[RMDB]
RNA sequence: GGGAACGACUCGAGUAGAGUCGAAAAGGCUGUGCACGAGCCCAAGCUGCAAAAGUACCUUGAGCAGUUUACCGGAGCCAAGGUGGUGACUUACGGCAAGAUGCUGGACUCUAGGAUGGUCCCAAAGGACUUUUAGUACCUUCGGGUACUAAAAGUCAAAAGAAACAACAACAACAAC
Reactivity to 2A3 in 0.01 (KOAc 150mM, MgCl2 10mM, bicine 150mM(pH8.5), 24C), signal-to-noise 2, nucleotides 027 to 126: g020g010c030u050g010u080g050c040a020c060g000a010g000c000c000c020a040a040g000c010u040g000c010a040a060a060a140g070u080a060c020c030u030u020g000a030g020c020a030g010u090u110u070a070c030c010g060g060a030g040c020c020a040a030g060g020u070g020g090u050g020a080c000u040u170a030c020g000g000c030a050a050g070a080u160g000c030u030g030g030a030c000u030c010u050a020g130g030a150u050g040g020u070c000c000c000a050a080a010g110
Reactivity to DMS in 0.01 (KOAc 150mM, MgCl2 10mM, bicine 150mM(pH8.5), 24C), signal-to-noise 2, nucleotides 027 to 126: g020g020c010u010g020u000g000c020a110c080g020a090g000c010c010c050a090a100g010c020u000g000c020a040a130a050a050g000u000a080c110c030u010u000g000a200g010c000a070g010u000u010u010a070c080c090g000g010a080g020c080c030a060a040g010g020u000g000g030u010g000a070c050u000u000a080c110g000g010c030a070a080g010a090u000g010c010u000g000g010a070c050u000c050u000a170g000g000a120u000g000g000u000c010c000c020a040a090a150g010